[RMDB]
The record gives the reactivity of an RNA of 177 nucleotides to 2A3 and DMS.
The 2A3 profile rests on 10,530 reads.
Values cover nucleotides 27 to 126.
The RNA was probed in 150 mM KOAc, 10 mM MgCl2 and 150 mM bicine (pH 8.5) at 24 C.
RNA sequence: GGGAACGACUCGAGUAGAGUCGAAAACACCACGCGAUUAGGUUUCAAAAAGGGUAAGGGAUGUCAAAGAUUAUGCAAAGUUGUUGACUCACCUUGCUUACCAGAGGCUGAAUGUGUGUUCGCGAUCACGCGGAUAUUUAUUCGUAAAUAUCCGCGUAAAAGAAACAACAACAACAAC
Reactivity to 2A3 in 0.01 (KOAc 150mM, MgCl2 10mM, bicine 150mM(pH8.5), 24C), signal-to-noise 9, nucleotides 027 to 126: c070a030c010c000a010c000g010c010g010a010u040u150a070g030g050u030u010u020c090a090a110a070a050a070g090g000g010u010a010a010g020g010g000a020u160g030u010c010a010a020a040g070a110u140u180a080u290g170c130a120a090a080g080u100u100g050u040u010g050a000c000u030c040a130c010c000u000u010g000c000u010u030a030c020c030a040g000a010g030g000c020u020g040a080a100u130g140u070g020u030g080u180u030c040g000c010g030a060u040c000
Reactivity to DMS in 0.01 (KOAc 150mM, MgCl2 10mM, bicine 150mM(pH8.5), 24C), signal-to-noise 8, nucleotides 027 to 126: c150a170c040c030a150c030g010c020g000a090u020u020a130g000g000u000u010u010c030a030a070a090a180a090g000g010g000u000a020a010g000g000g000a100u040g010u000c000a020a040a060g000a070u030u010a110u050g030c300a080a070a080g010u000u040g010u020u000g000a020c020u000c130a250c010c000u000u000g000c000u000u010a060c150c130a140g000a030g000g000c010u000g000a110a100u030g010u010g000u010g010u000u000c030g010c020g000a090u020c160